[RMDB]
RNA sequence: GGGAACGACUCGAGUAGAGUCGAAAACAUCCACUGCUACGGCAGUGGAUGAACGAGGUAGGUACGCCUACCUCGAAAGUUGGAUGUGAGCAUACACAUUAAACGUCCAUGGUACGCCAUGGACGAAGAUACCUGCGUAGUUCGCUACGCAGGUAUCAAAAGAAACAACAACAACAAC
Reactivity to DMS in 0.01 (KOAc 150mM, MgCl2 10mM, bicine 150mM(pH8.5), 24C), signal-to-noise 3, nucleotides 027 to 126: c010a010u000c000c010a020c000u000g020c000u000a120c170g030g010c010a040g010u000g000g000a000u000g000a030a130c040g000a000g030g010u010a010g010g030u000a100c230g020c010c000u000a000c000c000u010c010g000a020a030a090g020u010u010g000g000a030u000g020u010g000a200g020c190a110u030a130c000a010c030a050u000u000a070a130a210c030g000u000c000c000a010u000g000g010u000a100c210g030c010c000a010u000g010g000a010c000g000a000a020
Reactivity to 2A3 in 0.01 (KOAc 150mM, MgCl2 10mM, bicine 150mM(pH8.5), 24C), signal-to-noise 3, nucleotides 027 to 126: c000a010u000c010c000a020c000u010g000c000u020a060c170g140g040c000a010g020u010g010g010a000u000g000a030a000c030g000a000g000g020u010a000g000g060u040a020c240g060c010c000u000a000c010c000u000c000g000a010a000a010g270u300u290g110g020a030u000g020u000g030a030g110c160a110u200a220c000a020c010a020u070u090a200a100a040c020g000u000c000c000a010u000g010g030u060a060c230g090c050c000a020u010g000g040a000c000g010a000a000
This 177-nucleotide RNA was probed chemically with DMS and 2A3. The reactions ran in a buffer of 150 mM KOAc, 10 mM MgCl2 and 150 mM bicine (pH 8.5), at 24 C. Values are in units of 0.01, from 0 to 300, in steps of 10. The data come from the RNA Mapping Database (RMDB), library OK2TRN.